[RMDB]
RNA sequence: GGGAACGACUCGAGUAGAGUCGAAAAGACAUUCUCUCAUGAUAGUCCCGCUUAUACUAGAAGUCAUGGUGUUAUCAUAGAUAAACUACGAGGUGAUACAACCGUCGCCUUGCAAGAAUAUGAGCUGGAUGCUGAAGAUUUCAAUGUUAUAUUGGUGCAUGAUUAACGACUUCGGUCGUUAAUCAUGAAAAGAAACAACAACAACAAC
Reactivity to DMS in 0.01 (KOAc 150mM, MgCl2 10mM, bicine 150mM(pH8.5), 24C), signal-to-noise 1, nucleotides 027 to 156: g000a110c030a060u010u000c040u000c020u020c050a140u010g010a130u000a150g020u000c000c000c040g000c090u000u000a060u010a040c070u000a140g010a220a120g040u050c010a110u000g000g000u000g050u000u010a060u020c000a070u000a070g020a140u010a020a090a080c020u000a030c080g010a010g010g030u000g000a030u000a180c040a100a100c260c090g000u010c020g000c010c000u010u010g020c010a010a130g000a040a100u000a010u000g000a130g030c050u000g020g000a100u000g010c050u000g010a140a130g010a090u000u000u010c050a040a090u010g020u000u010a150u010a120u010u000g020g010u010g010
Reactivity to 2A3 in 0.01 (KOAc 150mM, MgCl2 10mM, bicine 150mM(pH8.5), 24C), signal-to-noise 4, nucleotides 027 to 156: g080a000c000a050u070u040c050u000c000u000c030a080u150g070a100u070a050g050u040c010c020c000g000c030u040u070a100u060a150c050u040a060g080a160a020g060u040c040a060u140g040g010u050g070u160u120a070u070c020a030u000a060g060a060u100a110a160a120c040u050a010c060g020a010g010g000u020g000a010u080a180c140a130a090c210c060g010u020c000g000c000c000u010u020g030c080a040a030g050a120a030u080a030u030g010a010g000c050u060g060g020a010u040g010c030u070g040a070a050g010a080u010u130u150c060a080a050u030g070u140u020a120u010a040u130u090g030g000u040g050